RNA sequence: GGGAACGACUCGAGUAGAGUCGAAAAUCGGCGUCGAAGCGUAUCAGCGCAUCCACGUAGACGGAGGUAUCCAGGACUAUCAACGCCGGCCCCCGGUCAAGCUCUUCAGGGGAUCCUCGCGCACACCACCAAACAGGUUAUUCGUAACCUGUUUGGUAAAAGAAACAACAACAACAAC
Reactivity to 2A3 in 0.01 (KOAc 150mM, MgCl2 10mM, bicine 150mM(pH8.5), 24C), signal-to-noise 3, nucleotides 027 to 126: u050c000g040g000c020g010u020c050g030a040a000g030c010g020u050a110u290c070a050g080c000g000c020a020u040c050c050a070c070g040u060a030g020a060c040g040g030a040g090g030u130a090u060c030c030a040g020g050a030c050u050a070u220c050a060a030c030g000c000c000g020g040c000c000c000c000c000g000g040u090c080a090a020g000c020u000c000u130u110c070a060g000g030g010g030a040u030c010c010u020c010g030c010g020c030a020c020a010c000c000
Reactivity to DMS in 0.01 (KOAc 150mM, MgCl2 10mM, bicine 150mM(pH8.5), 24C), signal-to-noise 5, nucleotides 027 to 126: u000c030g030g010c000g030u000c100g020a040a080g030c030g020u000a070u010c220a120g000c060g010c040a120u010c010c050a090c140g000u000a070g000a110c090g000g010a050g020g020u010a070u010c030c040a140g010g010a100c060u000a070u010c070a090a040c060g020c010c010g010g010c040c020c020c030c020g020g000u000c110a080a130g000c040u000c050u000u000c070a090g000g000g010g010a060u000c010c020u000c070g020c040g020c050a080c080a090c100c100